[RMDB]
An RNA of 177 nucleotides, treated with 2A3 and read out base by base. Source: RMDB library OK1LIB, as collected in RNAgym. The 2A3 profile rests on 647 reads. Values cover nucleotides 27 to 126.

RNA sequence: GGGAACGACUCGAGUAGAGUCGAAAAGGACUACCCGUCAGGGUUCUGGCCAUACGGACAGCCGGGUCCACUGCCGAAAAGAAAACAAAACAAAACAAAAACAAAACAAAACAAAAACAAAAGAAAAGGUAAUGCAUCAUUUCGAUGAUGCAUUACCAAAAGAAACAACAACAACAAC
Reactivity to 2A3 in 0.01 (KOAc 150mM, MgCl2 10mM, bicine 150mM(pH8.5), 24C), signal-to-noise 1, nucleotides 027 to 126: g080g040a140c010u080a030c050c000c000g030u000c070a020g060g000g000u040u000c000u070g040g000c000c000a010u060a080c000g000g000a040c000a000g000c000c000g010g000g030u020c000c000a050c010u000g040c000c050g000a020a020a000a060g100a030a140a000a000c140a000a090a020a000c060a000a140a020a000c060a210a020a070a000a000c020a120a140a060a000c020a040a160a000a000c120a030a100a100a050a000c080a000a070a050a000g250a010a040a000a000